[RMDB]
RNA sequence: GGGAACGACUCGAGUAGAGUCGAAAAUCAACAAAUCGGAUGAAAUCACCCAUCCCCAAGUGCUCGAAGAGUUCCAGCUUCUGCAGAAAUCCCUGCAGCAAAGGAACACCGCGGUGAAGGAGUCCUACACGUAAAAUGCUUUCGAGCAUUUUACGUGAAAAGAAACAACAACAACAAC
Reactivity to DMS in 0.01 (KOAc 150mM, MgCl2 10mM, bicine 150mM(pH8.5), 24C), signal-to-noise 2, nucleotides 027 to 126: u010c110a130a150c120a000a080a100u010c150g000g000a060u000g000a180a180a060u010c020a060c030c000c030a150u010c010c000c010c070a130a100g010u010g020c060u010c050g010a040a020g010a150g000u000u000c010c050a090g000c240u000u010c010u000g010c000a010g040a060a040a150u020c110c140c000u000g010c050a060g010c300a020a020a140g010g030a010a000c010a090c150c130g000c140g020g040u000g000a020a060g000g000a300g000u000c000c000u000a120
Reactivity to 2A3 in 0.01 (KOAc 150mM, MgCl2 10mM, bicine 150mM(pH8.5), 24C), signal-to-noise 2, nucleotides 027 to 126: u020c000a020a100c010a040a140a040u170c100g010g000a020u030g040a030a020a050u010c000a000c010c020c010a060u040c020c010c020c000a120a030g090u060g110c030u070c150g080a090a030g060a030g060u020u020c000c000a030g000c070u050u030c000u000g000c010a010g050a060a240a060u110c070c020c030u010g010c000a000g010c010a050a020a020g000g020a010a030c030a030c010c060g030c090g000g050u020g000a010a020g040g020a020g050u020c000c000u020a020